[RMDB]
RNA sequence: GGGAACGACUCGAGUAGAGUCGAAAAAGUCUUGCAGCCGUUUCAUAUCAACUUUGCUUGGAUAUUCUUCAUCCCAUUCAUGGUUCAGAUACGGUGACCAGGUGAAGGAUUGCAGAUUCAUCGGACGCCUUUGUUUAGCUUUCGAGCUAAACAAAGGAAAAGAAACAACAACAACAAC
Reactivity to 2A3 in 0.01 (KOAc 150mM, MgCl2 10mM, bicine 150mM(pH8.5), 24C), signal-to-noise 2, nucleotides 027 to 126: a030g040u040c040u040u110g040c070a040g110c100c000g060u040u030u090c070a080u120a020u180c010a000a060c020u070u080u100g030c010u000u040g060g010a030u070a040u210u040c000u050u060c040a030u030c010c020c000a030u150u160c040a050u080g040g060u070u070c040a020g020a190u110a230c050g070g000u000g010a010c000c040a000g010g030u030g030a030a000g020g030a030u020u150g020c020a030g020a160u020u060c030a060u060c030g020g060a050c050g170
Reactivity to DMS in 0.01 (KOAc 150mM, MgCl2 10mM, bicine 150mM(pH8.5), 24C), signal-to-noise 2, nucleotides 027 to 126: a110g010u000c010u000u010g020c080a150g010c020c030g000u000u010u020c020a080u020a090u010c090a050a100c040u000u000u000g010c110u010u000g000g000a080u010a080u010u010c080u000u000c080a070u010c030c030c060a160u020u000c080a070u000g010g010u000u000c090a090g000a130u000a030c110g000g000u010g010a070c090c070a100g000g050u000g010a070a050g000g010a090u000u010g000c090a050g000a120u010u000c050a050u010c060g000g030a140c220g000
Record summary:
This 177-nucleotide RNA was probed chemically with 2A3 and DMS. Conditions: 150 mM KOAc, 10 mM MgCl2 and 150 mM bicine (pH 8.5), 24 C. 2A3 adducts were read by reverse transcription with SuperScript II with manganese. The data come from the RNA Mapping Database (RMDB), library OK2TRN. For 2A3, 1,107 sequencing reads were counted.